Annotation
The record gives the reactivity of an RNA of 177 nucleotides to 2A3 and DMS. For DMS the reverse transcriptase was MarathonRT. High 2A3 reactivity points to a flexible backbone, as in loops and unpaired stretches. The data come from the RNA Mapping Database (RMDB), library OK2TRN. For 2A3, 1,041 sequencing reads were counted. The RNA was probed in 150 mM KOAc, 10 mM MgCl2 and 150 mM bicine (pH 8.5) at 24 C.
[RMDB]
RNA sequence: GGGAACGACUCGAGUAGAGUCGAAAAACUAACCAGCUUGUGAACAUCGGAGACUUCUAUAGCCAGCAGAUUGCACCCGAGCUGACAUCCUCGGCUGUGGAUGAUCUGACGAUCCUGAAGGCAGAUGCCUCAGGUCGAUGUUCGCAUCGACCUGAGGAAAAGAAACAACAACAACAAC
Reactivity to 2A3 in 0.01 (KOAc 150mM, MgCl2 10mM, bicine 150mM(pH8.5), 24C), signal-to-noise 1, nucleotides 027 to 126: a000c030u110a110a060c050c010a000g050c040u090u110g000u020g090a040a020c020a040u040c040g050g000a030g050a030c000u000u000c020u030a060u050a070g000c000c020a000g090c000a010g000a120u110u160g020c020a040c000c070c090g030a020g000c020u060g010a010c030a050u020c000c020u000c050g040g000c020u000g020u030g010g060a010u010g030a100u000c030u060g130a080c080g080a080u060c000c020u060g070a090a050g050g000c030a010g060a270u270g020
Reactivity to DMS in 0.01 (KOAc 150mM, MgCl2 10mM, bicine 150mM(pH8.5), 24C), signal-to-noise 2, nucleotides 027 to 126: a090c180u000a080a170c100c030a080g010c090u000u010g030u000g000a020a070c080a020u000c020g000g010a100g000a100c030u000u000c040u000a050u000a060g010c030c020a090g030c130a040g010a080u000u000g000c010a000c050c020c050g010a080g000c050u000g020a100c220a050u010c130c070u000c110g050g000c030u000g010u000g000g020a050u010g050a120u010c000u000g000a100c110g000a070u000c030c020u000g000a080a050g010g000c010a110g010a100u000g000